[RMDB]
RNA sequence: GGGAACGACUCGAGUAGAGUCGAAAAGAUGAUAUAGACAGUGCUUCAAGCUUCGUAUCUUACUUAAGCGAGAUGUAUGGAUUUCCAAAAAGCUCUAUGUGGUAUGACUUAAGGCGCUUAAAGGAGAUCUUCCGCAUCAAUUCGUUGAUGCGGAAGAAAAAGAAACAACAACAACAAC
Reactivity to DMS in 0.01 (KOAc 150mM, MgCl2 10mM, bicine 150mM(pH8.5), 24C), signal-to-noise 2, nucleotides 027 to 126: g000a120u000g000a080u000a120u000a100g000a110c270a060g020u000g000c030u000u000c100a060a100g000c110u000u000c100g050u010a010u000c030u010u020a060c040u000u020a040a090g010c110g010a080g040a050u000g000u010a060u000g000g000a300u010u000u000c000c020a050a040a060a110a160g000c010u000c040u000a080u000g000u010g010g000u000a020u000g000a020c030u000u000a040a060g000g000c080g000c010u000u000a060a060a100g010g000a040g000a060
Reactivity to 2A3 in 0.01 (KOAc 150mM, MgCl2 10mM, bicine 150mM(pH8.5), 24C), signal-to-noise 1, nucleotides 027 to 126: g020a100u150g020a010u080a000u040a300g110a070c060a040g020u010g020c000u040u060c090a050a010g030c040u150u010c000g050u010a020u080c020u080u080a220c000u070u120a100a000g090c070g050a030g000a000u050g050u150a010u040g050g000a100u010u160u000c010c000a000a070a020a070a010g040c000u000c030u040a040u110g030u030g010g000u090a060u180g010a000c000u040u020a080a000g040g000c090g000c010u010u160a070a010a000g130g050a120g010a030